[RMDB]
RNA sequence: GGGAACGACUCGAGUAGAGUCGAAAAGCUUUCCGUUUCGACGGAAAGCAAAGGCAAGUACAUGAGAGAUCAAAGAUCACUCAGAAAAGCCGUUCUAAAGAAAAAUCAAUCUGUUCGCAGAUUGAAAGUUGUAAUCACCAUUCGUGGUGAUUACAACAAAAGAAACAACAACAACAAC
Reactivity to DMS in 0.01 (KOAc 150mM, MgCl2 10mM, bicine 150mM(pH8.5), 24C), signal-to-noise 2, nucleotides 027 to 126: g040c000u000u000u010c000c000g040u000u000u010c090g010a040c010g000g000a000a010a020g000c020a050a000a070g020g040c010a050a030g030u000a080c070a110u000g000a030g000a080g020a030u000c030a110a140a300g000a090u000c010a060c000u000c000a040g000a020a120a160a270g010c000c000g000u000u000c000u010a070a050a170g000a030a060a120a130a130u000c000a000a000u000c000u010g010u000u030c150g040c000a020g000a000u000u010g000a020a020a080
Reactivity to 2A3 in 0.01 (KOAc 150mM, MgCl2 10mM, bicine 150mM(pH8.5), 24C), signal-to-noise 2, nucleotides 027 to 126: g000c000u020u000u010c010c010g000u030u040u090c200g090a020c000g000g000a000a000a000g000c000a030a020a000g010g010c020a000a060g100u090a080c100a200u100g000a010g000a000g000a020u000c100a300a190a010g010a000u000c000a020c030u020c010a000g000a020a060a000a020g000c010c010g010u020u000c030u070a120a100a100g060a050a140a020a010a030u010c000a000a000u000c000u010g060u070u060c250g000c070a000g030a000u010u020g000a050a010a000